RNA sequence: GGGAACGACUCGAGUAGAGUCGAAAAUCCGCGGUGGGUUUGGUCGCCCAUGGGACGGAGAUAUGGAAAGGGUCUCGUACGCUGUAAGACUAACUUCGGUUGAGCUUGCGAUAUGGGCCUAUGCCUGCACAAUCCUUGUGUUCGCACAAGGAUUGUGAAAAGAAACAACAACAACAAC
Reactivity to 2A3 in 0.01 (KOAc 150mM, MgCl2 10mM, bicine 150mM(pH8.5), 24C), signal-to-noise 2, nucleotides 027 to 126: u010c000c000g000c000g010g020u030g010g000g010u040u060u110g080g000u080c050g000c020c000c020a000u040g080g170g010a050c010g010g070a070g010a060u140a080u190g040g090a030a110a130g030g000g040u030c070u060c140g000u000a010c010g000c010u000g020u020a010a020g040a110c020u010a010a030c030u060u050c150g060g010u020u030g140a000g020c000u000u020g010c000g030a050u010a030u090g010g000g000c010c000u040a030u110g020c000c000u040g000
Reactivity to DMS in 0.01 (KOAc 150mM, MgCl2 10mM, bicine 150mM(pH8.5), 24C), signal-to-noise 1, nucleotides 027 to 126: u000c000c000g050c010g040g060u010g020g000g010u000u000u010g040g000u020c250g000c000c030c010a030u000g000g030g040a060c000g000g000a050g000a100u000a080u020g020g020a060a050a220g000g000g010u010c000u010c000g020u000a030c030g000c010u000g010u000a020a050g030a160c010u010a020a040c050u000u000c190g030g010u000u010g010a110g000c000u000u000g000c000g000a160u000a020u000g000g010g000c000c000u000a030u000g010c000c010u000g000